[RMDB]
RNA sequence: GGGAACGACUCGAGUAGAGUCGAAAAGAUAUGGACACGCAGGCAAGCUAGUCGGAAACGACAUAGUGAUGACCCUGGUGUCCUAAGUCAAAACACGUCAGCGAUUGUUCGCAAUCGCUGACGUGAAGUACUACGAGACCUUCGGGUCUCGUAGUACAAAAGAAACAACAACAACAAC
Reactivity to DMS in 0.01 (KOAc 150mM, MgCl2 10mM, bicine 150mM(pH8.5), 24C), signal-to-noise 2, nucleotides 027 to 126: g000a020u000a300u010g000g000a010c010a000c000g020c020a020g000g000c040a130a200g020c020u000a030g000u000c010g000g000a100a100a230c000g000a000c000a080u000a000g020u000g000a120u010g010a110c300c000c000u020g000g000u000g000u000c000c000u000a000a060g010u000c020a040a010a100a240c000a000c000g000u000c000a000g010c020g010a030u000u000g020u010u060c220g010c030a000a000u000c010g010c000u000g000a000c000g020u000g000a000a060
Reactivity to 2A3 in 0.01 (KOAc 150mM, MgCl2 10mM, bicine 150mM(pH8.5), 24C), signal-to-noise 1, nucleotides 027 to 126: g020a000u070a050u180g000g010a000c010a010c030g300c060a050g000g000c020a000a110g000c000u010a010g000u010c020g010g010a060a080a040c030g040a020c090a300u020a000g010u030g080a300u180g060a080c000c000c020u020g000g020u000g000u040c010c010u000a000a000g000u020c020a000a030a120a140c030a000c010g010u030c000a000g000c000g020a010u000u020g040u100u170c300g040c180a010a000u020c010g000c000u000g000a000c000g000u000g010a000a000